[RMDB]
RNA sequence: GGGAACGACUCGAGUAGAGUCGAAAAGCCGAUGCCGGCACACAAUUGGCCUUUAUGAAUGGCGGAGGAAUUCGUAGUUCGAUGAAUGCAGGUGAUAUCACCUUUGGGAACAUCCUAAGCGUGCUACAGAGCUUAUGAUGUUCGCAUCAUAAGCUCUAAAAGAAACAACAACAACAAC
Reactivity to DMS in 0.01 (KOAc 150mM, MgCl2 10mM, bicine 150mM(pH8.5), 24C), signal-to-noise 3, nucleotides 027 to 126: g000c020c010g010a070u010g010c040c040g000g000c020a040c070a170c060a110a070u000u000g000g020c010c070u010u020u000a080u020g010a040a050u000g010g020c040g000g010a100g020g020a110a140u000u000c050g030u000a170g010u000u000c030g000a070u000g010a080a060u000g010c160a020g000g000u000g000a180u000a130u010c030a030c010c010u000u010u010g010g000g010a040a060c090a070u000c010c030u000a030a070g020c080g030u000g000c050u000a090c180
Reactivity to 2A3 in 0.01 (KOAc 150mM, MgCl2 10mM, bicine 150mM(pH8.5), 24C), signal-to-noise 3, nucleotides 027 to 126: g010c010c000g030a030u090g050c060c020g020g060c020a010c010a000c000a050a210u070u080g020g000c000c000u090u150u090a210u180g040a100a000u110g060g000c040g010g010a030g000g080a010a090u040u040c010g000u050a050g020u010u050c050g040a060u070g060a100a070u100g020c050a010g000g040u020g030a080u060a060u300c020a040c020c000u030u030u090g080g000g010a100a070c030a090u060c010c010u020a060a010g010c010g100u050g030c020u050a110c030

An RNA of 177 nucleotides, treated with DMS and 2A3 and read out base by base. The RNA was probed in 150 mM KOAc, 10 mM MgCl2 and 150 mM bicine (pH 8.5) at 24 C. Reactivities are given for positions 27 through 126. For 2A3, 2,705 sequencing reads were counted.